RNA sequence: GGGAACGACUCGAGUAGAGUCGAAAACGGCUGGCUUCUACAACCCGCCCUAUGCCAUCAACAAUGCCAAUAACCAGAUGAACAUCAGCAUCAAGACGCUGCCGGUGACGUCCGCGCAUUUUGACGGGGUAAUACAUGAGUUCGCUCAUGUAUUACCAAAAGAAACAACAACAACAAC
Reactivity to DMS in 0.01 (KOAc 150mM, MgCl2 10mM, bicine 150mM(pH8.5), 24C), signal-to-noise 5, nucleotides 027 to 126: c140g020g030c030u010g020g000c040u010u010c070u010a090c090a070a130c060c020c030g000c060c020c060u000a070u010g000c040c030a080u000c060a050a080c120a080a060u000g010c010c030a070a070u020a070a110c100c040a060g010a070u000g000a070a080c040a060u010c040a040g000c030a060u010c050a090a080g000a070c120g000c050u000g030c040c030g010g000u010g000a090c090g010u000c010c040g030c080g010c040a070u010u010u000u000g010a090c110g010g020
Reactivity to 2A3 in 0.01 (KOAc 150mM, MgCl2 10mM, bicine 150mM(pH8.5), 24C), signal-to-noise 6, nucleotides 027 to 126: c020g010g010c030u030g020g000c020u050u030c030u140a080c050a070a070c010c010c020g050c010c020c000u070a100u130g030c030c000a020u040c000a020a080c020a070a040u090g020c010c020a030a050u100a060a050c030c020a020g020a080u060g040a070a030c020a060u030c020a020g030c020a020u040c050a070a020g100a060c040g010c040u030g020c020c010g020g010u050g040a050c020g030u000c020c020g040c010g040c060a080u060u080u040u150g070a070c050g080g020